The record gives the reactivity of an RNA of 170 nucleotides to DMS and 2A3. The reactions ran in a buffer of 150 mM KOAc, 10 mM MgCl2 and 150 mM bicine (pH 8.5), at 24 C. The 2A3 profile rests on 113,511 reads. For 2A3 the reverse transcriptase was SuperScript II with manganese.
RNA sequence: GGGAACGACUCGAGUAGAGUCGAAAAGGGACCGUCCCUCGGUAAUGGCGAAUGGGACCCAGAAAUCUCCUUUGAUUCCCAGAGAGAAUCAGGAGAAAACUGGCUCUCCCUUAGCCAUCCGAGUGGAAAACGAGAUGGUUCGCCAUCUCGAAAAGAAACAACAACAACAAC
Reactivity to DMS in 0.01 (KOAc 150mM, MgCl2 10mM, bicine 150mM(pH8.5), 24C), signal-to-noise 8, nucleotides 027 to 129: g000g040g010a090c020c020g000u020c000c000c020u000c000g020g020u020a080a020u000g000g000c030g030a090a040u030g000g000g000a050c250c000c000a000g020a030a170a110u020c020u010c000c000u040u050u060g040a000u000u010c020c020c140a140g050a070g010a110g000a060a020u020c010a030g030g000a040g060a000a010a040a060c000u020g020g000c030u010c070u010c020c000c020u020u010a170g020c030c000a020u030c000c000g000a000g000u080g010g010a000a020a030a080
Reactivity to 2A3 in 0.01 (KOAc 150mM, MgCl2 10mM, bicine 150mM(pH8.5), 24C), signal-to-noise 9, nucleotides 027 to 129: g030g030g060a040c010c000g050u030c000c000c000u000c010g000g010u080a110a050u010g000g000c010g030a040a020u050g010g000g000a080c130c000c000a000g010a030a300a020u000c000u010c000c000u110u090u230g000a000u000u020c010c020c110a040g050a000g000a010g000a130a000u000c000a010g000g000a000g000a000a010a000a010c000u000g000g000c000u000c000u000c000c000c000u010u030a000g000c000c000a000u000c000c000g000a010g000u250g000g000a010a010a000a030